Structure probing data (DMS) for a 177-nucleotide construct. The RNA was probed in 150 mM KOAc, 10 mM MgCl2 and 150 mM bicine (pH 8.5) at 24 C.
RNA sequence: GGGAACGACUCGAGUAGAGUCGAAAAGAUAUGGAUCGAUCCCUAUGGAGCGAGUGCAGUCGGAAACGACUGGACUCGCGAUGAAAUAGGGAGUCGAUCCUAAGUCAAAACCGAAGUUCGCUUCGGAGCAGGAAGCUAAGUUCGCUUAGCUUCCUGCAAAAGAAACAACAACAACAAC
Reactivity to DMS in 0.01 (KOAc 150mM, MgCl2 10mM, bicine 150mM(pH8.5), 24C), signal-to-noise 1, nucleotides 027 to 126: g000a000u000a300u020g000g010a000u000c000g030a030u000c000c000c000u000a010u000g010g020a020g050c010g050a010g060u000g000c020a040g030u000c000g000g000a150a100a260c000g010a010c010u000g020g020a020c000u000c000g000c000g000a080u000g020a090a160a050u000a000g010g000g020a010g000u010c030g020a000u000c000c020u000a000a120g010u000c040a160a050a240a170c000c000g000a010a040g020u030u000c300g010c010u000u000c000g010g000a160
Record summary
DMS (dimethyl sulfate) methylates the pairing face of unpaired adenines and cytosines. DMS adducts were read by reverse transcription with MarathonRT. Source: RMDB library TTRDES, as collected in RNAgym.